[RMDB]
The record gives the reactivity of an RNA of 177 nucleotides to 2A3 and DMS. It was measured as part of the RMDB library M2PK50. Conditions: 150 mM KOAc, 10 mM MgCl2 and 150 mM bicine (pH 8.5), 24 C. For DMS, 2,230 sequencing reads were counted. For DMS the reverse transcriptase was MarathonRT.
RNA sequence: GGGAACGACUCGAGUAGAGUCGAAAAAGUUUAGAUUUCGAUCUAAACUAGACCACUAAGAGGAUGACGAGUGUCUACGACGCAUCUAGUAGAAUGCGCCCAGCUGUGAGCAGUUCGCUGCUCACAAUAGGUCCCUAGUAUUCGUACUAGGGACCUAAAAAGAAACAACAACAACAAC
Reactivity to 2A3 in 0.01 (KOAc 150mM, MgCl2 10mM, bicine 150mM(pH8.5), 24C), signal-to-noise 2, nucleotides 027 to 126: a000g020u000u000u000a000g000a020u050u100u080c170g070a010u030c020u000a000a000a000c000u020a020g030a020c010c010a020c040u060a140a020g050a020g180g020a070u070g060a070c030g070a020g100u160g020u080c050u070a050c070g050a020c020g000c020a040u000c020u030a030g050u030a030g080a220a020u040g010c030g040c000c040c000a020g020c090u050g000u000g000a000g000c000a010g000u000u040c200g050c110u000g010c000u030c000a000c000a000a010
Reactivity to DMS in 0.01 (KOAc 150mM, MgCl2 10mM, bicine 150mM(pH8.5), 24C), signal-to-noise 3, nucleotides 027 to 126: a020g000u000u000u000a000g000a010u000u000u020c180g010a020u000c000u000a010a000a000c000u010a040g010a240c020c010a160c140u000a090a090g010a120g000g010a090u000g000a070c080g010a160g010u000g000u000c070u010a120c060g000a080c050g000c020a010u000c020u000a140g000u000a050g010a080a050u000g020c030g010c020c010c150a120g000c200u010g000u000g000a010g000c000a000g020u000u000c290g010c010u000g000c010u000c000a000c000a020a060